[RMDB]
RNA sequence: GGGAACGACUCGAGUAGAGUCGAAAAGGAUAGUAGUUCGCUACUAUCCAAAAGAUCUAUGAAAAUAGAUCAAAAAUGGUGGUGCUCACCAAAGACCAAAAAAAACACAUAGCUUCGGCUAUGUGAAGUAUGAGGGUAAGUUCGCUUACCCUCAUACAAAAGAAACAACAACAACAAC
Reactivity to DMS in 0.01 (KOAc 150mM, MgCl2 10mM, bicine 150mM(pH8.5), 24C), signal-to-noise 2, nucleotides 027 to 126: g000g000a000u000a010g000u010a010g010u000u030c270g010c010u000a000c000u000a000u000c000c000a010a050a140a140g000a010u000c000u000a000u000g000a260a080a130a010u000a000g020a020u000c000a020a040a080a080a090u000g000g000u000g000g000u000g010c230u010c030a040c020c020a010a050a070g000a230c010c060a000a000a000a050a030a060a080a220c010a020c010a010u000a000g000c000u000u010c170g010g000c000u000a010u000g010u000g010a030a040
Reactivity to 2A3 in 0.01 (KOAc 150mM, MgCl2 10mM, bicine 150mM(pH8.5), 24C), signal-to-noise 2, nucleotides 027 to 126: g000g000a010u000a000g010u000a000g010u020u030c170g020c070u010a010c000u010a010u000c000c000a000a000a000a010g000a000u000c000u000a000u000g030a030a050a000a010u000a010g000a000u020c010a000a140a000a000a020u050g000g020u020g040g060u180g120c100u120c110a010c000c010a040a060a000g050a020c040c000a150a020a010a000a000a030a000a010c000a000c000a000u000a010g010c000u060u040c300g080g000c010u000a000u000g010u000g020a010a020
The record gives the reactivity of an RNA of 177 nucleotides to DMS and 2A3. The DMS profile rests on 1,577 reads. The reactions ran in a buffer of 150 mM KOAc, 10 mM MgCl2 and 150 mM bicine (pH 8.5), at 24 C. Source: RMDB library M2PK50, as collected in RNAgym. The 2A3 profile rests on 3,431 reads.